[RMDB]
Structure probing data (2A3 and DMS) for a 177-nucleotide construct.
RNA sequence: GGGAACGACUCGAGUAGAGUCGAAAAAUUAAACGCUUUCAAACUUUGAGUAAAGAAAAGGGGAAUGUACUGUGGGUACAAUUAUUUGUCAAGAUUGCAAUGAAACCAUUGAUCAAUUUGAAAAUGAGUAGAUGUUAUAGUUCGCUAUAACAUCUACAAAAGAAACAACAACAACAAC
Reactivity to 2A3 in 0.01 (KOAc 150mM, MgCl2 10mM, bicine 150mM(pH8.5), 24C), signal-to-noise 8, nucleotides 027 to 126: a010u120u110a080a070a010c090g020c070u050u100u050c070a090a100a090c060u080u110u160g070a070g060u180a060a080a030g060a030a080a020a010g040g010g000g060a040a090u070g020u030a020c040u040g050u170g210g100g000u040a010c020a030a030u140u070a080u040u090u090g170u040c020a020a020g040a130u000u050g000c000a010a010u010g040a240a060a060c100c010a000u000u030g030a050u100c020a030a050u030u010u070g090a090a060a030a040u030g020a030
Reactivity to DMS in 0.01 (KOAc 150mM, MgCl2 10mM, bicine 150mM(pH8.5), 24C), signal-to-noise 5, nucleotides 027 to 126: a080u020u020a070a080a170c130g000c040u000u010u000c030a070a100a110c090u010u000u010g000a120g000u020a060a070a090g010a040a030a030a040g000g000g000g020a130a060u010g010u010a040c060u010g020u020g020g000g010u010a030c050a030a110u010u020a080u000u000u020g000u010c010a060a060g000a030u000u010g000c020a030a020u010g000a140a090a110c240c020a030u010u000g010a100u020c010a020a040u000u000u000g000a030a030a020a030u010g000a220